[RMDB]
RNA sequence: GGGAACGACUCGAGUAGAGUCGAAAACGUCUUGAGCGGAUUUCUCAUCACCUCGCUGCUGCUCGACGAGCUGGGGCGCACCGGUCGUAUCGAUCUGAGCGGGUUCUGGAUUCGCCGUGCGCGGCGGUGUAUGUGCGUGAUUCGUCACGCACAUACAAAAAGAAACAACAACAACAAC
Reactivity to 2A3 in 0.01 (KOAc 150mM, MgCl2 10mM, bicine 150mM(pH8.5), 24C), signal-to-noise 2, nucleotides 027 to 126: c010g010u000c020u200u300g030a050g050c020g030g000a090u000u080u060c060u000c010a120u120c030a060c020c060u040c040g000c010u050g030c020u080g000c010u010c010g030a030c010g000a020g020c020u010g040g000g040g030c080g030c020a030c000c040g030g010u020c010g030u120a150u300c100g000a020u010c050u060g030a030g040c060g000g030g070u040u040c000u030g120g030a200u080u040c010g000c020c000g000u020g000c000g000c000g000g000c010g030g030
Reactivity to DMS in 0.01 (KOAc 150mM, MgCl2 10mM, bicine 150mM(pH8.5), 24C), signal-to-noise 1, nucleotides 027 to 126: c120g020u000c040u020u010g010a130g080c060g000g000a110u000u000u000c010u000c020a150u010c100a090c120c060u010c040g000c020u000g010c020u010g030c000u000c020g020a040c010g000a030g020c020u000g000g010g010g010c020g000c010a070c010c040g000g000u010c010g010u010a120u000c110g010a010u000c020u000g010a060g020c030g010g000g000u000u020c010u000g020g000a130u000u000c000g000c020c010g000u000g000c060g000c010g020g000c000g010g000
This 177-nucleotide RNA was probed chemically with 2A3 and DMS. For 2A3, 2,679 sequencing reads were counted. Reactivities are rounded to 0.1 and cut off at 0 and 3. 2A3 adducts were read by reverse transcription with SuperScript II with manganese. Reactivities are given for positions 27 through 126.